About this RNA:
An RNA of 177 nucleotides, treated with DMS and 2A3 and read out base by base.

[RMDB]
RNA sequence: GGGAACGACUCGAGUAGAGUCGAAAAAGUUUAGAUUUCGAUCUAAACUAGACCAGUAAGAGGAUGACGAGUGACUACGACGCAUCUAGUAGAAUGCGCCCAGCUGUGAGCAGUUCGCUGCUCACAACCAAGAACCUAGGUUCGCCUAGGUUCUUGGAAAAGAAACAACAACAACAAC
Reactivity to DMS in 0.01 (KOAc 150mM, MgCl2 10mM, bicine 150mM(pH8.5), 24C), signal-to-noise 4, nucleotides 027 to 126: a040g000u000u000u000a000g010a010u000u000u020c180g000a020u000c000u000a000a000a000c000u000a050g010a190c030c010a110g020u010a090a090g010a060g010g010a050u000g010a050c060g010a090g010u000g000a110c120u000a080c090g010a090c040g000c020a020u000c020u000a120g000u000a090g010a050a050u010g010c050g000c010c010c100a100g000c150u000g000u000g000a000g010c000a010g020u000u010c230g030c010u000g000c000u000c000a000c020a020a140
Reactivity to 2A3 in 0.01 (KOAc 150mM, MgCl2 10mM, bicine 150mM(pH8.5), 24C), signal-to-noise 3, nucleotides 027 to 126: a000g010u000u010u000a000g000a010u030u060u130c270g080a030u000c010u020a020a000a000c000u000a020g030a060c030c010a010g030u070a120a030g030a040g130g010a040u080g040a050c070g010a030g070u050g060a050c050u060a040c170g090a030c020g000c030a020u000c040u040a040g030u030a030g060a200a030u030g030c020g010c020c010c020a050g040c070u050g000u000g000a000g000c010a000g010u010u100c220g040c070u000g000c000u000c000a010c000a000a010
The RNA was probed in 150 mM KOAc, 10 mM MgCl2 and 150 mM bicine (pH 8.5) at 24 C. For DMS, 4,166 sequencing reads were counted.